The record gives the reactivity of an RNA of 207 nucleotides to 2A3 and DMS. The RNA was probed in 150 mM KOAc, 10 mM MgCl2 and 150 mM bicine (pH 8.5) at 24 C. Source: RMDB library OK3TST, as collected in RNAgym.

RNA sequence: GGGAACGACUCGAGUAGAGUCGAAAAGCUAGUCGGUGACGACUAGCAGCCACGACUAAGGUCGUGGGAAGAUGCACACAAACAGCACAGUGGCAUCAAUAACUACAUCAUGUGCUGAAACCGGAUUAACGGAUAACAUUAAAAUUUAAGAUGUAGGUACCCCUAUAGUAUUCGUACUAUAGGGGUAAAAAGAAACAACAACAACAAC
Reactivity to 2A3 in 0.01 (KOAc 150mM, MgCl2 10mM, bicine 150mM(pH8.5), 24C), signal-to-noise 5, nucleotides 027 to 156: g010c000u000a000g000u000c000g000g040u050g020a050c020g000a000c000u000a000g010c000a000g030c000c010a000c000g010a000c000u090a150a140g180g000u000c000g000u030g000g000g000a020a060g010a010u020g000c020a010c000a000c010a300a190a010c020a020g010c020a010c000a050g000u010g000g000c020a000u010c040a030a030u180a080a010c010u010a000c000a010u020c000a020u100g000u010g010c010u000g020a050a010a000c000c010g040g060a210u150u210a110a110c020g010g050a090u100a130a020c080a050u150u230a080a050a100a050u130u140u090a100a020g010a010u010g010u010a000g010g030
Reactivity to DMS in 0.01 (KOAc 150mM, MgCl2 10mM, bicine 150mM(pH8.5), 24C), signal-to-noise 3, nucleotides 027 to 156: g030c000u000a010g020u000c000g030g000u000g000a290c000g010a020c000u000a040g050c010a110g030c000c000a010c030g010a040c000u000a150a220g030g020u010c000g010u050g000g010g020a060a100g020a060u000g010c030a110c000a070c050a020a110a230c010a040g040c010a010c030a200g030u010g020g040c040a080u000c020a150a120u000a130a060c000u000a000c000a010u000c020a170u000g000u000g030c000u010g000a160a100a110c010c010g010g020a260u000u000a080a120c000g020g000a150u000a030a080c030a120u010u000a040a040a070a150u010u010u010a140a270g000a040u010g020u000a040g020g010